Chemical mapping of a 177-nucleotide RNA with 2A3 and DMS. For 2A3 the reverse transcriptase was SuperScript II with manganese. For DMS, 2,132 sequencing reads were counted. Reactivities are given for positions 27 through 126. For DMS the reverse transcriptase was MarathonRT.
[RMDB]
RNA sequence: GGGAACGACUCGAGUAGAGUCGAAAAGAAAAUAACGUGAGGAAGCAGAGAAAGAACUGCAAGGUCACGAACCACCAAACAUCAGGAACAGCAGAAAGAAGCUGAAGGAGAUGAACCACCAAAAAAACUAUAUGUCAUAGUUCGCUAUGACAUAUAGAAAAGAAACAACAACAACAAC
Reactivity to 2A3 in 0.01 (KOAc 150mM, MgCl2 10mM, bicine 150mM(pH8.5), 24C), signal-to-noise 4, nucleotides 027 to 126: g020a000a120a000a040u120a050a040c020g010u010g000a000g060g080a110a070g010c010a000g040a000g120a090a300a030g060a180a050c010u030g000c020a050a130g080g020u000c020a000c000g010a010a010c010c040a020c030c010a050a100a040c000a020u060c020a000g030g090a060a080c000a010g040c030a000g120a160a290a000g090a090a060g000c010u030g030a050a020g070g050a060g000a000u020g010a020a040c010c010a000c020c030a080a130a040a020a000a000a000
Reactivity to DMS in 0.01 (KOAc 150mM, MgCl2 10mM, bicine 150mM(pH8.5), 24C), signal-to-noise 3, nucleotides 027 to 126: g010a080a080a120a100u000a080a130c040g040u000g000a050g020g010a120a270g010c010a020g010a160g010a120a100a190g000a110a100c000u000g040c020a020a170g000g010u000c000a020c030g010a080a110c070c040a070c080c040a060a080a070c050a050u010c030a060g000g010a130a070c030a040g000c040a050g010a050a070a110g000a080a060g000c040u000g020a060a070g000g000a130g000a020u000g000a060a090c040c040a070c090c100a010a000a040a050a050a010a090